[RMDB]
RNA sequence: GGGAACGACUCGAGUAGAGUCGAAAAAGAGUUGCGCCAUCUCUAAGCAAAUCAAAGAGCUAGGGGAGCAACUAAAGAGAAAGAAUGAUCCAGCUAACCGCCAGAGAAUUGACCAGAUCGUUCACCACUGCAAGGUUGAGGAUCAUCCUCACAGAGACAUUGAAGGUCUUUUCGAAGACCUUCAAUGAAAAGAAACAACAACAACAAC
Reactivity to 2A3 in 0.01 (KOAc 150mM, MgCl2 10mM, bicine 150mM(pH8.5), 24C), signal-to-noise 5, nucleotides 027 to 156: a000g140a000g000u000u010g010c010g030c030c020a120u070c040u000c010u070a080a070g020c040a070a050a170u240c050a120a140a050g070a040g030c030u070a020g000g010g000g020a060g020c000a000a000c010u040a040a050a010g090a000g030a070a110a000g080a070a040u020g000a010u020c010c010a010g030c050u070a000a020c020c020g110c130c010a010g040a000g060a080a080u230u260g030a030c030c040a070g080a240u040c010g010u010u010c020a030c110c000a070c030u020g020c060a110a260g030g000u010u020g020a030g010g000a020u030c000a010u020c010c010u040c010a050c010a020g120a000g030a070
Reactivity to DMS in 0.01 (KOAc 150mM, MgCl2 10mM, bicine 150mM(pH8.5), 24C), signal-to-noise 3, nucleotides 027 to 156: a110g000a070g030u000u000g010c000g000c010c020a140u020c020u000c020u020a110a220g000c040a120a120a160u000c100a110a130a080g020a180g060c070u000a090g000g040g000g010a060g000c020a020a050c010u010a040a050a110g000a160g000a190a090a080g020a030a020u010g010a050u000c030c010a110g000c050u000a050a050c020c000g000c110c110a100g000a130g010a060a050u000u000g030a040c010c170a170g000a300u000c000g000u000u000c010a040c040c000a130c070u000g050c040a050a100g000g050u000u000g020a130g010g010a080u000c040a050u000c010c010u000c040a070c040a110g000a220g000a150